Source: RMDB library OK1LIB, as collected in RNAgym. Structure probing data (2A3) for a 177-nucleotide construct. 2A3 adducts were read by reverse transcription with SuperScript II with manganese. The RNA was probed in 150 mM KOAc, 10 mM MgCl2 and 150 mM bicine (pH 8.5) at 24 C.
RNA sequence: GGGAACGACUCGAGUAGAGUCGAAAAGAGUGGUGCCCAGGAGUGCAGCAGCGCAUGCAAAUCGAUCAAAUUGGCAUAAUCCCAACUGUGAGCGGCAUGAAGAACCUUUGGCAGGGCAUUGGGAUAGCUGAGUGCACCACUUCGGUGGUGCACUCAGAAAAGAAACAACAACAACAAC
Reactivity to 2A3 in 0.01 (KOAc 150mM, MgCl2 10mM, bicine 150mM(pH8.5), 24C), signal-to-noise 1, nucleotides 027 to 126: g050a080g070u230g050g050u050g000c030c000c000a020g200g000a140g000u220g000c000a000g000c000a000g030c030g010c080a120u120g000c050a100a030a000u300c180g070a000u050c060a000a000a060u160u100g030g080c000a000u000a080a060u230c000c040c000a050a050c050u090g000u030g120a000g060c000g000g010c060a090u160g120a080a000g000a000a000c000c110u000u130u210g020g000c080a030g020g000g000c000a010u000u090g010g000g090a110u210a060g000